An RNA of 207 nucleotides, treated with DMS and 2A3 and read out base by base. It was measured as part of the RMDB library OK3TST. The 2A3 profile rests on 1,806 reads. Reactivities are given for positions 27 through 156. The RNA was probed in 150 mM KOAc, 10 mM MgCl2 and 150 mM bicine (pH 8.5) at 24 C. For DMS the reverse transcriptase was MarathonRT.

[RMDB]
RNA sequence: GGGAACGACUCGAGUAGAGUCGAAAAUCAAUUUUAACAGUAUAUGAAAAAAACAUUAAACUGAGUGACAUGCUAUAGCUUGCUCUUAUUGUUAAUAGCUGUAUAUUUGAUUUCAGUUCAUGGAAAGCUAAGUACAGUAUCUGACAUGAAAGAAUAAGUGACUAAAUUACUUCGGUAAUUUAGUCACAAAAGAAACAACAACAACAAC
Reactivity to DMS in 0.01 (KOAc 150mM, MgCl2 10mM, bicine 150mM(pH8.5), 24C), signal-to-noise 2, nucleotides 027 to 156: u000c020a040a040u000u010u000u010a020a200c030a120g040u010a200u000a180u030g000a000a000a040a070a070a090a140c040a100u000u000a040a050a110c050u000g030a070g030u010g010a120c090a160u000g010c130u000a190u030a080g010c040u000u000g030c060u000c010u000u000a100u000u000g000u000u000a010a060u000a100g050c010u020g000u000a030u000a150u000u000u010g010a030u000u000u000c000a070g000u000u000c130a080u000g000g000a050a030a070g000c010u010a050a140g030u000a030c010a070g020u000a070u010c050u000g020a060c000a040u020g000a130a050a050g010a080a050u010a050a230
Reactivity to 2A3 in 0.01 (KOAc 150mM, MgCl2 10mM, bicine 150mM(pH8.5), 24C), signal-to-noise 3, nucleotides 027 to 156: u010c000a010a010u060u060u130u240a140a040c030a010g030u080a140u050a120u300g080a070a160a040a010a000a030a050c050a030u120u110a110a110a060c090u040g010a010g010u010g070a050c010a090u110g040c030u100a050u110a290g000c010u000u110g010c010u010c000u000u060a070u090u070g020u040u040a090a060u020a100g020c000u020g030u020a040u000a040u120u080u030g040a020u000u020u020c070a070g080u090u070c020a030u050g050g000a090a040a000g000c020u030a040a030g090u070a050c020a050g020u050a080u100c070u050g070a010c010a010u050g050a050a070a040g020a040a090u220a240a020